[RMDB]
RNA sequence: GGGAACGACUCGAGUAGAGUCGAAAAGUCCACCACAUCAGGGUUGUCUCUGUAUUGAGUGCGGUAGAUGAACCCAUUCAUGAGUCUAGAGAUAAAGUCCAGACAGACGGUGCCGAUGAGGUUAACAGGUUCCUCCCACAUUCGUGUGGGAGGAACCAAAAGAAACAACAACAACAAC
Reactivity to 2A3 in 0.01 (KOAc 150mM, MgCl2 10mM, bicine 150mM(pH8.5), 24C), signal-to-noise 1, nucleotides 027 to 126: g060u000c000c000a000c010c000a000c060a090u060c010a030g000g000g000u000u000g030u000c000u000c000u030g130u120a010u160u090g080a070g040u000g000c130g000g040u060a060g130a300u300g090a210a160c000c000c000a000u010u000c000a000u120g000a010g090u000c000u280a000g000a000g040a000u090a040a000a000g010u000c050c000a000g000a000c120a000g000a000c000g020g180u300g070c050c070g010a000u050g010a000g270g000u000u160a060a000c000a000
Source: RMDB library OK1LIB, as collected in RNAgym.
An RNA of 177 nucleotides, treated with 2A3 and read out base by base.
The reactions ran in a buffer of 150 mM KOAc, 10 mM MgCl2 and 150 mM bicine (pH 8.5), at 24 C.